About this RNA
The data come from the RNA Mapping Database (RMDB), library OK2TST. The record gives the reactivity of an RNA of 177 nucleotides to 2A3 and DMS. For DMS the reverse transcriptase was MarathonRT. For 2A3 the reverse transcriptase was SuperScript II with manganese. Reactivities are given for positions 27 through 126.

[RMDB]
RNA sequence: GGGAACGACUCGAGUAGAGUCGAAAACGCCGGGGACGUCGGGAAUGGGGACGGGCGGACCGAUCGCGUCGGCAGUGAACGUCCCUGACAUCUCGGACAUCAAUGUCGAUGGUAAUCGCCAAUGUGGCCCCACUCAGUAGUUCGCUACUGAGUGGGGAAAAGAAACAACAACAACAAC
Reactivity to 2A3 in 0.01 (KOAc 150mM, MgCl2 10mM, bicine 150mM(pH8.5), 24C), signal-to-noise 1, nucleotides 027 to 126: c010g000c010c040g000g000g000g050a040c040g060u040c020g090g000g060a120a150u270g030g010g000g000a010c030g020g000g010c060g030g040a120c070c000g020a150u110c090g030c100g230u000c000g020g000c030a030g010u000g140a110a060c030g000u000c000c010c000u020g000a060c030a170u070c000u030c040g090g000a050c000a030u070c050a040a140u190g000u150c020g010a010u020g050g030u040a060a080u100c050g000c050c030a070a070u250g050u080g090g040
Reactivity to DMS in 0.01 (KOAc 150mM, MgCl2 10mM, bicine 150mM(pH8.5), 24C), signal-to-noise 1, nucleotides 027 to 126: c160g010c020c000g020g010g000g000a010c080g020u020c040g010g000g010a070a030u000g050g000g010g010a050c030g020g020g010c040g000g020a160c040c010g000a040u010c180g030c200g000u000c000g050g000c000a150g000u020g000a060a070c050g010u000c010c000c010u000g000a040c150a080u000c030u000c070g010g020a080c040a060u000c090a060a060u020g030u000c060g010a130u010g030g040u000a100a130u000c040g010c020c010a080a080u010g030u020g000g010